Conditions: 150 mM KOAc, 10 mM MgCl2 and 150 mM bicine (pH 8.5), 24 C. Structure probing data (2A3 and DMS) for a 177-nucleotide construct. Reactivities are rounded to 0.1 and cut off at 0 and 3. The data come from the RNA Mapping Database (RMDB), library RFMREP. For DMS, 4,182 sequencing reads were counted.

[RMDB]
RNA sequence: GGGAACGACUCGAGUAGAGUCGAAAACGCUCAUAACAUCUGGAAUGAUGCCAAAAGAAAGGGUGCCUAUCGUCCACCAGACCGAUAACAGGGCGUGAAAACGAACUUUAUCAAGCAUCGGACGACAGUAUAAGAUGACGUUCGCGUCAUCUUAUACAAAAGAAACAACAACAACAAC
Reactivity to 2A3 in 0.01 (KOAc 150mM, MgCl2 10mM, bicine 150mM(pH8.5), 24C), signal-to-noise 3, nucleotides 027 to 126: c020g010c000u010c030a070u070a140a040c010a040u000c020u050g070g120a170a100u170g020a040u050g010c040c040a090a150a030a020g140a060a060a030g070g020g010u050g040c010c000u080a080u060c010g010u000c000c000a020c030c000a040g050a080c010c060g020a010u020a010a070c130a070g010g000g000c000g000u010g030a030a030a000a010c000g000a000a000c010u040u040u010a040u020c010a040a040g050c030a060u110c060g000g000a010c010g010a020c030a020
Reactivity to DMS in 0.01 (KOAc 150mM, MgCl2 10mM, bicine 150mM(pH8.5), 24C), signal-to-noise 5, nucleotides 027 to 126: c170g010c030u000c030a050u010a120a190c060a080u000c020u000g010g030a150a080u000g000a030u000g010c050c090a050a080a110a090g000a100a100a060g000g010g000u000g000c020c030u010a060u000c010g010u000c010c000a140c100c080a080g010a080c180c070g000a000u000a010a050c200a020g010g010g020c000g000u000g010a080a060a110a020c020g010a020a010c010u000u000u000a000u000c020a100a070g010c090a180u000c110g010g010a050c020g010a050c300a080